RNA sequence: GGGAACGACUCGAGUAGAGUCGAAAAGUCGACGGUGUCGAAGACGCCAUGCCGGUCGACAUCAACGCGCUCGAGGAGUGGACGGUCGGCGAUCGGAUGCUGGCCGACAUCCUCAGCGGCAUGGCACGAGUAAUACGCCUUUCGAGGCGUAUUACUCAAAAGAAACAACAACAACAAC
Reactivity to DMS in 0.01 (KOAc 150mM, MgCl2 10mM, bicine 150mM(pH8.5), 24C), signal-to-noise 2, nucleotides 027 to 126: g000u010c030g020a170c120g010g010u000g000u000c030g000a120a060g020a120c220g010c000c000a010u000g000c000c010g010g000u040c000g000a000c040a050u010c060a210a090c240g030c110g000c030u000c150g040a050g000g000a060g000u030g010g020a040c000g000g010u000c000g000g000c000g000a170u030c260g010g010a100u100g030c010u030g000g010c020c010g000a030c000a070u020c020c000u000c020a050g050c000g000g000c000a020u000g010g040c040a210c160
Reactivity to 2A3 in 0.01 (KOAc 150mM, MgCl2 10mM, bicine 150mM(pH8.5), 24C), signal-to-noise 8, nucleotides 027 to 126: g140u090c040g030a120c100g020g020u030g010u030c020g020a040a030g070a040c110g010c010c000a000u000g010c020c000g060g080u060c010g020a020c000a000u030c030a030a240c080g030c020g030c110u110c120g020a010g040g010a140g300u120g020g030a120c010g000g000u010c010g000g030c020g030a180u240c130g080g010a060u300g000c000u010g010g000c010c000g010a000c000a010u000c000c010u000c000a020g010c000g000g000c000a010u010g010g000c020a020c050